[RMDB]
RNA sequence: GGGAACGACUCGAGUAGAGUCGAAAAGAGAUGGCGAGAGCCAUCGGUAGUAUAGCGAAAAUCAUAAAUGAGAAGAGCUCUAAACGCCUAAGUAGAGUUAAAAUAAUUAGACAUGCACUACUACAAACACGGCCUCGAACGUUCGCGUUCGAGGCAACAGAAGACGAGAGUUCGCUCUCGUCUUCUGAAAAGAAACAACAACAACAAC
Reactivity to 2A3 in 0.01 (KOAc 150mM, MgCl2 10mM, bicine 150mM(pH8.5), 24C), signal-to-noise 1, nucleotides 027 to 156: g080a000g000a000u000g000g020c000g060a110g060a010g020c000c000a010u000c000g000g000u060a000g040u000a010u040a010g050c030g000a010a000a060a060u060c040a050u090a250a220a260u170g010a010g010a170a020g000a010g030c000u000c000u010a140a160a090c060g020c070c050u090a070a010g000u000a010g050a020g020u070u090a000a150a110a020u260a000a100u070u110a000g060a100c010a000u140g000c010a000c020u000a010c000u020a080c050a000a130a000c120a010c090g190g000c000c000u010c000g000a000a000c060g000u020u100c190g000c010g110u010u010c000g000a000g000g000c000a000a000

The data come from the RNA Mapping Database (RMDB), library M2RFPK. Structure probing data (2A3) for a 207-nucleotide construct. Reactivities are given for positions 27 through 156. The RNA was probed in 150 mM KOAc, 10 mM MgCl2 and 150 mM bicine (pH 8.5) at 24 C. The 2A3 profile rests on 376 reads.